[RMDB]
RNA sequence: GGGAACGACUCGAGUAGAGUCGAAAAAUGGGGGGAGAUGCUAGGAGUCGGAGGAGACCGAAGCGAGGAGGAAAGCAAAGAAAGCAACGGGGCUAGCGAGUGGAUGUUCCGCCCCCCGAGGGGGCCGUACGCUUCUGGUUCGCCAGAAGCAAAAGAAACAACAACAACAAC
Reactivity to 2A3 in 0.01 (KOAc 150mM, MgCl2 10mM, bicine 150mM(pH8.5), 24C), signal-to-noise 4, nucleotides 027 to 129: a000u130g000g000g000g000g020g010a030g000a000u070g020c030u070a020g000g050a030g040u030c020g020g010a020g010g000a050g020a010c030c000g010a030a010g030c040g030a010g000g000a010g000g040a050a040a000g030c080a030a030a070g050a050a090a000g050c010a010a040c030g020g020g020g000c010u040a000g010c010g040a020g020u070g050g060a070u090g060u100u010c030c010g000c000c000c000c000c000c010g030a140g010g000g000g000g000c000c010g020u040a040c100
Reactivity to DMS in 0.01 (KOAc 150mM, MgCl2 10mM, bicine 150mM(pH8.5), 24C), signal-to-noise 3, nucleotides 027 to 129: a140u000g020g000g020g000g020g010a060g030a000u040g000c090u110a050g030g030a070g000u030c030g060g000a000g060g000a080g050a080c050c030g020a080a040g040c160g030a020g000g000a000g000g000a050a010a040g000c190a040a050a070g030a070a090a070g020c090a080a140c160g000g000g000g000c030u030a000g000c080g000a000g020u040g020g050a090u050g010u020u080c050c070g040c060c000c030c010c000c120g020a130g000g030g020g020g030c050c060g080u040a030c100
Structure probing data (2A3 and DMS) for a 170-nucleotide construct. The 2A3 profile rests on 11,342 reads. The reactions ran in a buffer of 150 mM KOAc, 10 mM MgCl2 and 150 mM bicine (pH 8.5), at 24 C. As a SHAPE reagent, 2A3 marks flexible, mostly unpaired nucleotides at the ribose 2'-OH.